[RMDB]
Structure probing data (DMS and 2A3) for a 207-nucleotide construct. Reactivities are given for positions 27 through 156. It was measured as part of the RMDB library OK3TST. 2A3 adducts were read by reverse transcription with SuperScript II with manganese.
RNA sequence: GGGAACGACUCGAGUAGAGUCGAAAACCCAGCGACUCGAUAGUCAGAUUUGACUAUCGAGAAGGCGGGACUGGAUUCAGGGCAUCGAACUCUCCAAGAUGCGAAAGAGAAAUCCCUGAAUCCAGUCCGGUCGAAGGAGGGAAGACCGAAACGCCAACGCCUAAAUUAAUUUCGAUUAAUUUAGGCGAAAAGAAACAACAACAACAAC
Reactivity to DMS in 0.01 (KOAc 150mM, MgCl2 10mM, bicine 150mM(pH8.5), 24C), signal-to-noise 2, nucleotides 027 to 156: c000c010c020a170g060c090g020a290c030u000c000g020a000u020a010g000u000c010a080g020a260u000u030u010g040a060c000u000a000u030c000g010a010g010a050a040g030g000c000g020g040g010a040c000u010g000g000a060u000u000c020a010g000g040g000c070a010u000c030g010a130a280c050u010c000u010c010c000a300a220g040a200u000g010c060g010a040a040a060g030a090g000a160a100a110u010c000c000c020u010g010a060a020u010c010c000a000g020u000c030c000g000g030u000c010g010a100a020g030g000a050g070g060g020a230a150g000a040c030c000g000a150a090a080c000g020c020c000a030a230
Reactivity to 2A3 in 0.01 (KOAc 150mM, MgCl2 10mM, bicine 150mM(pH8.5), 24C), signal-to-noise 4, nucleotides 027 to 156: c000c000c000a020g080c050g140a080c000u000c000g000a000u010a000g000u000c000a040g070a300u300u260u170g000a010c000u000a000u010c000g000a000g000a010a030g000g000c000g000g010g000a000c000u000g000g000a010u000u000c000a000g010g000g000c010a010u010c030g040a080a130c010u000c000u010c050c010a050a030g010a030u020g010c020g070a100a210a000g110a010g020a020a050a050u180c000c000c000u000g000a000a000u010c000c000a000g000u000c000c000g000g000u000c010g020a100a080g010g000a000g020g010g020a130a010g000a010c000c010g010a210a150a010c000g000c000c000a030a020